[RMDB]
RNA sequence: GGGAACGACUCGAGUAGAGUCGAAAAGAGCAACUUAGGAUUUUAGGCUCCCCGGUGCGUCUCGAACCGCGCCGGGCCAAACCCACAGGGGCUGGCGGACCUGUGCGGUCAAAAUCUUUCCGCUGGAAUACCUAUCCCAGUUUCGACUGGGAUAGAAGGGUUAUAUGAUGUUCGCAUCAUAUAACCCAAAAGAAACAACAACAACAAC
Reactivity to 2A3 in 0.01 (KOAc 150mM, MgCl2 10mM, bicine 150mM(pH8.5), 24C), signal-to-noise 2, nucleotides 027 to 156: g000a000g000c010a010a140c090u050u040a030g030g100a080u100u050u050u120a040g000g050c000u020c000c020c000c000g010g010u010g000c010g010u010c090u070c240g080a060a050c040c000g000c000g000c010c000g020g000g040c030c000a030a030a010c000c000c010a000c000a000g010g000g010g000c030u010g000g000c020g000g000a010c000c000u000g000u010g010c150g040g020u030c030a020a020a040a030u020c030u130u150u000c010c000g030c000u010g000g060a090a090u180a140c000c000u000a000u030c000c000c000a000g010u000u050u120c070g060a010c010u000g000g020g000a000u010a000g000a000a020
Record summary: Chemical mapping of a 207-nucleotide RNA with 2A3. For 2A3, 1,340 sequencing reads were counted. Reactivities are given for positions 27 through 156.